Record summary:
This 207-nucleotide RNA was probed chemically with 2A3 and DMS. It was measured as part of the RMDB library M2RFPK. Conditions: 150 mM KOAc, 10 mM MgCl2 and 150 mM bicine (pH 8.5), 24 C. The 2A3 profile rests on 1,888 reads. Reactivities are given for positions 27 through 156.
[RMDB]
RNA sequence: GGGAACGACUCGAGUAGAGUCGAAAAGAUGUUCGCUGAUUCGUCAGCCGCAUGCCCAGGUGGCCGCCAUCUUCAAGGCUACGGCGCGGAUAGGUCCGCGCUGAUCGUUUUCCUCCAACGACGCUAUAAAAGGAACGAAGGUUCGCCUUCGUUCCAACUACCUGCAAGAGUUCGCUCUUGCAGGUAGAAAAGAAACAACAACAACAAC
Reactivity to 2A3 in 0.01 (KOAc 150mM, MgCl2 10mM, bicine 150mM(pH8.5), 24C), signal-to-noise 3, nucleotides 027 to 156: g060a010u040g010u050u150c070g010c010u010g020a030u050u100c200g030u010c120a010g000c010c020g000c010a010u070g000c010c010c000a000g050g010u040g030g000c010c020g020c070c040a090u060c070u170u100c080a130a050g010g010c010u030a060c040g010g000c000g000c010g010g020a060u120a210g210g150u030c000c000g000c010g000c010u010g000a000u010c000g010u000u010u050u110c030c030u100c040c010a040a060c020g040a020c010g000c050u040a000u090a240a110a010a080g000g000a010a000c000g000a000a010g030g030u050u090c180g050c010c010u010u000c000g000u010u000c000c000a000a000
Reactivity to DMS in 0.01 (KOAc 150mM, MgCl2 10mM, bicine 150mM(pH8.5), 24C), signal-to-noise 1, nucleotides 027 to 156: g030a070u000g010u000u010c090g060c030u000g000a100u000u000c270g010u010c010a040g030c010c030g030c020a040u010g000c010c000c060a210g010g000u000g000g040c020c020g000c030c010a090u010c040u000u010c040a070a220g010g030c010u000a080c050g000g010c010g010c000g020g000a110u000a120g040g000u000c000c000g050c020g020c000u000g020a050u000c060g010u000u000u000u000c030c010u000c030c020a070a060c000g010a060c010g000c050u000a140u000a050a110a140a270g000g020a010a040c000g030a040a030g010g010u000u000c240g020c030c000u010u000c010g020u000u000c000c000a000a060